[RMDB]
RNA sequence: GGGAACGACUCGAGUAGAGUCGAAAAGAUGUGGGGCAUCAUAUACAGCUAAUGAUGUCGAAGUCCAAUCAUCUGGCAUGAUUAAGCCAAAUGCUCUUCUUUGUGCUACUUGCCCCUUUGCUAAGGGACUUAAAUUUUCCUUCGGGAAAAUUUAAGUAAAAGAAACAACAACAACAAC
Reactivity to 2A3 in 0.01 (KOAc 150mM, MgCl2 10mM, bicine 150mM(pH8.5), 24C), signal-to-noise 1, nucleotides 027 to 126: g050a030u040g010u040g070g050g030g030c000a010u000c020a010u150a000u050a090c070a020g020c040u100a050a020u000g020a000u010g020u000c050g040a110a000g050u040c070c000a010a070u100c010a000u030c000u000g030g000c000a000u010g000a110u150u080a010a040g000c050c070a150a000a080u190g000c040u050c050u080u060c010u050u120u030g060u060g040c000u000a070c060u040u110g030c000c010c010c000u010u020u060g030c040u050a010a020g010g000g000
Reactivity to DMS in 0.01 (KOAc 150mM, MgCl2 10mM, bicine 150mM(pH8.5), 24C), signal-to-noise 2, nucleotides 027 to 126: g010a020u000g020u000g020g000g010g020c000a000u000c010a010u000a110u010a170c250a080g000c060u000a070a020u000g010a010u000g020u000c030g000a110a180g000u010c060c040a040a110u020c010a030u000c020u010g010g000c060a040u000g010a070u000u000a070a080g020c170c080a000a030a130u000g010c100u000c050u000u000c040u000u000u020g020u000g010c030u010a060c070u000u000g010c010c010c010c040u000u000u010g000c060u000a090a150g000g000g000